This 177-nucleotide RNA was probed chemically with 2A3 and DMS.
Conditions: 150 mM KOAc, 10 mM MgCl2 and 150 mM bicine (pH 8.5), 24 C.
DMS adducts were read by reverse transcription with MarathonRT.
Source: RMDB library RFM100, as collected in RNAgym.
For 2A3, 2,561 sequencing reads were counted.
2A3 adducts were read by reverse transcription with SuperScript II with manganese.
RNA sequence: GGGAACGACUCGAGUAGAGUCGAAAAUGAUUAGCGUGGUGGUGAUUAUUAUCCCACCGUGCGGGGCUGCACUUGGACGAAGAAUGGCUUAGAAAUCAAGGCCUGAUUCAAGAAAACCCCCGCACCGCCCGAAUAGCAAAUUCGUUUGCUAUUCGGGAAAAGAAACAACAACAACAAC
Reactivity to 2A3 in 0.01 (KOAc 150mM, MgCl2 10mM, bicine 150mM(pH8.5), 24C), signal-to-noise 5, nucleotides 027 to 126: u140g010a040u080u120a030g030c030g050u040g020g020u030g000g070u180g110a050u030u160a100u110u170a030u090c000c020c000a000c000c000g010u000g000c000g010g000g000g000c070u120g000c040a020c040u010u000g020g000a000c050g040a080a100g070a180a120u130g000g000c010u030u030a090g100a100a190a060u180c070a100a010g010g000c000c010u120g080a280u000u000c000a000a000g060a010a120a010a010c000c000c000c000c000g010c000a000c000c000g000
Reactivity to DMS in 0.01 (KOAc 150mM, MgCl2 10mM, bicine 150mM(pH8.5), 24C), signal-to-noise 2, nucleotides 027 to 126: u010g020a100u000u010a160g000c020g000u010g000g040u010g000g030u050g010a020u000u010a130u040u060a160u000c000c000c000a060c150c160g020u020g010c030g020g020g000g000c050u000g050c300a130c010u030u000g000g000a000c040g020a100a150g020a100a030u010g010g020c000u000u000a190g030a080a060a160u010c100a050a110g020g020c000c000u000g000a270u000u000c000a020a050g000a100a080a170a100c300c000c000c000c050g000c000a020c010c230g040